Structure probing data (2A3 and DMS) for a 207-nucleotide construct. Values are in units of 0.01, from 0 to 300, in steps of 10. Values cover nucleotides 27 to 156. The data come from the RNA Mapping Database (RMDB), library OK3TST. The reactions ran in a buffer of 150 mM KOAc, 10 mM MgCl2 and 150 mM bicine (pH 8.5), at 24 C.
RNA sequence: GGGAACGACUCGAGUAGAGUCGAAAAGCUUUCACCAUCCUUUACGGUCUCAAAUAAAAUUUGAGUAGGCGUGGAAGUUGGAGCCCACCCACCAACGGCCUUAAAAGUAACUGAAGCGCGCAUUGAGUCGAACUUCUCGCCAUCAUGACCCGCAGCGAGAGGAAUGAUAGUUCGCUAUCAUUCCUCUAAAAGAAACAACAACAACAAC
Reactivity to 2A3 in 0.01 (KOAc 150mM, MgCl2 10mM, bicine 150mM(pH8.5), 24C), signal-to-noise 2, nucleotides 027 to 156: g030c000u000u000u020c010a000c000c030a080u110c000c000u090u190u240a120c190g050g000u040c000u000c000a050a070a040u210a180a170a100a160u030u040u020g030a050g010u080a140g080g030c080g010u030g020g000a000a030g020u030u050g040g020a010g010c000c000c000a020c010c030c000a030c030c000a050a040c030g050g020c020c000u050u060a060a020a000a110g040u050a130a000c030u030g060a070a050g040c010g000c000g000c200a090u020u160g020a010g010u030c010g000a060a020c000u110u010c010u050c020g010c000c010a070u100c010a040u100g050a050c020c040c010g030c040a030g020c040g080
Reactivity to DMS in 0.01 (KOAc 150mM, MgCl2 10mM, bicine 150mM(pH8.5), 24C), signal-to-noise 1, nucleotides 027 to 156: g020c000u010u010u020c000a120c040c050a120u000c020c000u000u000u030a030c070g080g000u000c040u000c000a000a030a090u000a040a060a010a300u030u010u030g000a050g000u000a010g040g010c020g040u000g030g000a000a030g020u000u000g020g020a130g000c040c000c020a060c120c020c010a160c020c000a050a060c020g000g000c010c010u000u000a040a080a100a150g050u000a070a000c060u010g000a110a050g010c110g070c060g050c140a130u000u030g010a090g020u000c010g000a000a130c060u000u000c020u000c000g000c000c010a060u000c030a120u000g000a120c010c000c000g000c020a090g010c070g000